Structure probing data (2A3 and DMS) for a 207-nucleotide construct. DMS adducts were read by reverse transcription with MarathonRT. The reactions ran in a buffer of 150 mM KOAc, 10 mM MgCl2 and 150 mM bicine (pH 8.5), at 24 C. Source: RMDB library M2RFPK, as collected in RNAgym. Reactivities are given for positions 27 through 156.
RNA sequence: GGGAACGACUCGAGUAGAGUCGAAAAGAGUUCGGUUGGAGCGACAAGUAUUUAGCUUGAGAUAGCUAAAUCACCUCGGUAUGAUAAGGGUGAGACCUAGGAACCGUAGGGGUAUUCUCAAAGGAAGGUUACCGAACAACCUUCGGGUUGUUCGGAAGAAACGAGGAAGAUUCGUCUUCCUCGUUUCAAAAGAAACAACAACAACAAC
Reactivity to 2A3 in 0.01 (KOAc 150mM, MgCl2 10mM, bicine 150mM(pH8.5), 24C), signal-to-noise 1, nucleotides 027 to 156: g080a010g030u050u050c050g030g000u070u080g080g020a040g050c030g030a020c020a020a060g090u110a060u000u020u010a010g000c010u020u030g020a020g020a090u130a010g010c010u020a010a010a010u010c000a030c000c000u050c010g010g020u110a070u160g100a090u080a080a070g020g030g000u050g050a040g010a040c000c010u010a040g110g000a030a020c010c070g060u130a060g000g030g000g000u020a120u180u040c060u010c000a060a090a020g020g010a050a030g040g020u070u060a040c010c000g000a000a000c000a000a000c000c000u010u040c130g040g040g000u000u000g000u000u000c000g000g000a000a000
Reactivity to DMS in 0.01 (KOAc 150mM, MgCl2 10mM, bicine 150mM(pH8.5), 24C), signal-to-noise 1, nucleotides 027 to 156: g000a110g010u000u010c060g030g010u010u000g000g000a150g010c050g000a100c040a020a060g010u010a070u010u010u000a030g000c020u000u000g020a300g000a140u010a020g020c000u000a000a010a020u000c000a050c010c020u000c010g030g020u010a090u030g020a150u010a100a090g010g060g020u010g120a180g000a130c060c020u000a160g020g000a060a060c090c010g000u000a040g060g000g030g000u010a050u000u000c010u020c030a040a050a060g010g020a060a060g010g020u000u020a200c000c000g000a010a030c010a000a010c000c020u040u010c300g030g050g020u020u000g000u000u000c000g000g010a000a090